[RMDB]
Source information
Chemical mapping of a 177-nucleotide RNA with 2A3. For 2A3 the reverse transcriptase was SuperScript II with manganese. The reactions ran in a buffer of 150 mM KOAc, 10 mM MgCl2 and 150 mM bicine (pH 8.5), at 24 C. The 2A3 profile rests on 802 reads. Values cover nucleotides 27 to 126.
RNA sequence: GGGAACGACUCGAGUAGAGUCGAAAAUCGCCUUGUGCGACCGCGCUUAAAUGUGCGGCGGCAUCAUCAAUGCAUUGACGUUCUGCGGCGCUUAACAGCGCGGCGUCGGCAGUUAGCGCGCCGGUCAUCCGAUCGUACGUUUCGACGUACGAUCGGAAAAAGAAACAACAACAACAAC
Reactivity to 2A3 in 0.01 (KOAc 150mM, MgCl2 10mM, bicine 150mM(pH8.5), 24C), signal-to-noise 2, nucleotides 027 to 126: u130c030g070c000c000u070u190g030u070g080c000g010a160c000c000g000c000g000c020u110u300a150a020a010u230g000u000g010c050g020g000c050g020g010c020a050u090c000a000u000c000a010a170u070g020c030a060u000u080g000a000c000g000u020u160c000u040g000c000g150g000c010g000c010u080u070a160a020c060a000g030c020g010c000g020g000c000g010u060c000g050g050c030a020g000u070u080a040g000c010g000c010g000c000c060g030g000u060c030a060